Record summary:
Conditions: 150 mM KOAc, 10 mM MgCl2 and 150 mM bicine (pH 8.5), 24 C. An RNA of 207 nucleotides, treated with DMS and 2A3 and read out base by base. For 2A3, 10,491 sequencing reads were counted.
RNA sequence: GGGAACGACUCGAGUAGAGUCGAAAAGGGGUCUUGAAACAAUUGAGGAUGUGGAGGUGUGGCUGAAGCCUCCACGGCCACACUACCCACCCACAUCUCCCCACCAAUUGCUUCAAGACGGAGGCACCCAAAAGCUGAAGGGUUCGCCCUUCAGCAACUUAAGAAGUACGUUCGCGUACUUCUUAAGAAAAGAAACAACAACAACAAC
Reactivity to DMS in 0.01 (KOAc 150mM, MgCl2 10mM, bicine 150mM(pH8.5), 24C), signal-to-noise 3, nucleotides 027 to 156: g010g020g020g020u000c000u000u010g010a040a030a030c020a020a030u000u000g010a220g050g030a040u000g050u020g000g010a190g000g000u010g020u010g020g020c000u000g000a060a100g030c000c020u000c020c010a300c000g000g000c020c020a030c050a040c000u000a090c040c030c040a300c080c000c000a030c020a040u000c010u000c300c020c040c080a300c090c030a020a030u000u000g000c000u000u000c010a050a040g000a070c000g010g010a010g060g030c020a070c030c040c000a080a050a120a240g000c010u000g020a010a020g010g010g000u020u000c300g020c020c000c020u000u000c010a030g000c010a010a050
Reactivity to 2A3 in 0.01 (KOAc 150mM, MgCl2 10mM, bicine 150mM(pH8.5), 24C), signal-to-noise 2, nucleotides 027 to 156: g050g010g010g000u000c000u000u010g010a000a010a010c000a000a010u000u010g000a010g010g000a000u010g000u010g000g010a010g000g010u000g000u010g000g010c000u030g030a080a010g010c000c000u000c010c000a000c000g000g010c000c000a000c010a000c000u060a060c050c080c030a050c010c000c000a000c010a000u000c010u020c030c010c000c000a000c000c000a000a000u000u000g000c000u000u000c000a000a010g000a000c030g000g000a000g000g010c000a030c000c000c000a030a150a030a030g000c000u000g010a010a000g080g030g000u080u180c270g170c000c000c000u000u000c000a000g000c000a000a000